[RMDB]
This 207-nucleotide RNA was probed chemically with 2A3. 2A3 adducts were read by reverse transcription with SuperScript II with manganese. The data come from the RNA Mapping Database (RMDB), library RNAMAK. Reactivities are given for positions 27 through 156.
RNA sequence: GGGAACGACUCGAGUAGAGUCGAAAACUAUUCCAGUUCGCUGGAAUAGAAAAAAACCUUUGUGAACAGACAUGCUGCCCUACUGUGCCCAUUGGGCAUUAGGAUCAGCAACAGCUGUUCACUCUGGUAAAAAACGUCCUACUUCGGUAGGACGUAAGAACCAAGUGUACUUCGGUACACUUGGUUCAAAAGAAACAACAACAACAAC
Reactivity to 2A3 in 0.01 (KOAc 150mM, MgCl2 10mM, bicine 150mM(pH8.5), 24C), signal-to-noise 2, nucleotides 027 to 156: c010u010a000u000u000c000c000a010g040u020u070c180g050c160u030g000g020a030a000u020a010g040a160a080a010a020a010a000a000c010c000u020u000u010g000u010g010a020a010c010a010g090a030c060a110u070g000c010u010g000c010c000c000u080a220c130u100g020u040g050c000c040c070a300u240u300g020g000g010c000a000u000u050a000g010g010a040u200c030a000g050c000a010a010c010a030g000c000u000g010u020u000c000a000c000u000c000u000g000g000u120a200a140a000a000a000a000c010g010u000c010c000u000a010c000u060u100c200g110g010u000a000g000g000a000c000g000u000a000a020